Chemical mapping of a 177-nucleotide RNA with DMS. The data come from the RNA Mapping Database (RMDB), library OK2TRN.
RNA sequence: GGGAACGACUCGAGUAGAGUCGAAAAAGUGGGGAUGGGGUCUAUGGACUCAGGAGAGCUUUUACCCAAGCCGGAGCUAGAUCUCAGUUGAUGAGUCUAUGGGCGGUUGCAGAUGACAGUACGAAGGGUGCUACUUAGUGUUCGCACUAAGUAGCACAAAAGAAACAACAACAACAAC
Reactivity to DMS in 0.01 (KOAc 150mM, MgCl2 10mM, bicine 150mM(pH8.5), 24C), signal-to-noise 2, nucleotides 027 to 126: a110g010u010g030g010g020g000a130u010g000g020g000g000u000c030u000a050u010g020g000a070c030u000c010a040g000g000a110g010a070g050c030u000u000u000u000a240c040c020c030a080a090g030c090c080g030g010a040g030c190u000a010g000a090u010c010u000c010a130g010u000u000g030a120u000g000a010g000u000c000u000a040u010g010g000g020c100g000g010u010u000g000c040a080g020a100u010g010a130c080a100g020u010a060c130g010a080a070g020g000